[RMDB]
RNA sequence: GGGAACGACUCGAGUAGAGUCGAAAAUUCAAGCGAUUCGUCGCUUGAACCUGAGGAGUCUCAAGCAAAAUUGUUCCCUUUUGCUUUUGCUUUCCUCUUUUAAGUAGUAGUGCUUCGGCACUACUAAUGUUCAGAUAUGAUUCGUCAUAUCUGAACAAAAAGAAACAACAACAACAAC
Reactivity to DMS in 0.01 (KOAc 150mM, MgCl2 10mM, bicine 150mM(pH8.5), 24C), signal-to-noise 5, nucleotides 027 to 126: u000u000c000a010a000g010c010g000a030u000u010c200g020u000c000g010c000u000u000g000a010a050c030c000u000g010a020g010g000a030g000u010c010u000c040a010a010g010c000a000a010a010a020u010u010g010u000u000c000c000c000u000u000u000u000g000c000u000u000u000u000g000c080u000u000u000c000c000u000c000u000u010u010u010a070a180g010u000a000g010u000a000g020u000g010c000u000u010c200g030g000c000a000c000u000a010c000u000a010a030
Reactivity to 2A3 in 0.01 (KOAc 150mM, MgCl2 10mM, bicine 150mM(pH8.5), 24C), signal-to-noise 5, nucleotides 027 to 126: u030u000c000a000a000g000c000g020a010u040u110c210g050u000c000g130c000u000u000g000a010a010c010c010u020g010a010g010g010a010g040u030c000u000c030a000a010g000c010a000a020a050a080u190u290g010u020u030c000c000c000u010u010u000u000g010c000u020u020u020u000g020c030u080u130u040c000c000u020c000u100u070u050u100a110a040g000u020a000g000u000a000g000u010g000c010u030u060c240g100g000c010a000c000u000a000c000u000a010a000
Overview
The record gives the reactivity of an RNA of 177 nucleotides to DMS and 2A3. DMS adducts were read by reverse transcription with MarathonRT. Values cover nucleotides 27 to 126. The reactions ran in a buffer of 150 mM KOAc, 10 mM MgCl2 and 150 mM bicine (pH 8.5), at 24 C. The data come from the RNA Mapping Database (RMDB), library M2PK50.